[RMDB]
RNA sequence: GGGAACGACUCGAGUAGAGUCGAAAACAGGAAACUGGUUAAUCGUUUUCCUUGGUAGUAUAGCGGAAACCAUAAAUAAGAAGAACUGUAAGUGCUUGAGUAGAGUUAAAAUAAUUAGACAGGCAAUUAAGGUACUCCACGUUCGCGUGGAGUACAAGUAAUGGUGAACGUUCGCGUUCACCAUUACAAAAGAAACAACAACAACAAC
Reactivity to DMS in 0.01 (KOAc 150mM, MgCl2 10mM, bicine 150mM(pH8.5), 24C), signal-to-noise 1, nucleotides 027 to 156: c040a020g030g000a020a090a100c100u000g030g020u010u010a110a100u010c050g010u000u000u000u000c010c030u000u020g020g020u010a090g010u000a150u000a030g010c010g000g010a110a120a100c020c030a030u000a010a100a100u000a020a110g030a090a120g020a100a100c080u010g030u000a080a170g010u010g020c040u010u000g000a130g000u000a220g000a120g000u000u000a000a000a090a100u000a020a100u020u010a080g000a110c020a070g030g010c020a040a150u000u000a030a100g000g010u000a000c000u000c000c000a010c000g030u000u000c240g040c080g050u000g000g010a020g020u010a010c010a000a080
Reactivity to 2A3 in 0.01 (KOAc 150mM, MgCl2 10mM, bicine 150mM(pH8.5), 24C), signal-to-noise 3, nucleotides 027 to 156: c020a010g000g070a030a040a020c040u080g060g030u110u170a090a070u160c060g000u020u030u070u030c020c000u020u040g070g000u020a080g010u030a050u110a100g030c030g030g010a040a020a040c020c000a030u130a160a060a010u190a070a040g050a040a010g010a010a020c000u030g010u080a090a000g060u040g050c040u060u060g000a010g010u030a060g030a010g050u100u100a050a050a050a100u130a020a070u080u010a020g050a030c000a020g050g020c010a010a030u110u060a160a100g060g000u010a000c000u010c000c000a000c000g020u040u050c210g030c000g050u000g020g020a000g000u000a000c000a000a000
This 207-nucleotide RNA was probed chemically with DMS and 2A3. For 2A3, 1,527 sequencing reads were counted.